[RMDB]
RNA sequence: GGGAACGACUCGAGUAGAGUCGAAAAUACAGUGUCUCUUUCGCUCGAAAGAACAGAGGUAGAACAAAUGUAAUGGCCGAGAUAUCGUUUCAGUCGUCAUUCUUUGAUUGACGAUUCGAUUGUUGCUUGCAGCCAUUAGAUUCGUCUAAUGGCUGCAAAAAGAAACAACAACAACAAC
Reactivity to 2A3 in 0.01 (KOAc 150mM, MgCl2 10mM, bicine 150mM(pH8.5), 24C), signal-to-noise 1, nucleotides 027 to 126: u130a000c030a000g070u000g000u000c040u030c000u100u090u000c190g080c220u200c070g030a060a080a030g190a010a010c050a000g050a100g050g110u070a020g090a250a090c070a180a010a020u140g060u110a180a110u010g140g000c110c100g000a070g000a070u190a030u080c060g000u000u090u090c090a000g050u050c000g000u000c000a050u110u000c000u160u030u130g070a070u000u160g000a060c010g000a000u090u030c020g000a010u000u000g000u040u000g070c000u000
Reactivity to DMS in 0.01 (KOAc 150mM, MgCl2 10mM, bicine 150mM(pH8.5), 24C), signal-to-noise 2, nucleotides 027 to 126: u030a050c050a070g000u000g010u010c210u000c000u000u010u000c100g010c120u020c240g010a070a080a060g000a000a060c020a020g010a080g020g000u010a000g000a070a050c040a070a090a070u010g060u020a080a030u000g000g020c020c020g030a080g000a110u010a050u000c000g030u020u000u020c000a110g010u000c000g000u000c000a010u010u010c060u040u030u010g000a010u000u000g000a000c020g010a000u000u000c030g010a020u000u000g000u000u010g000c030u000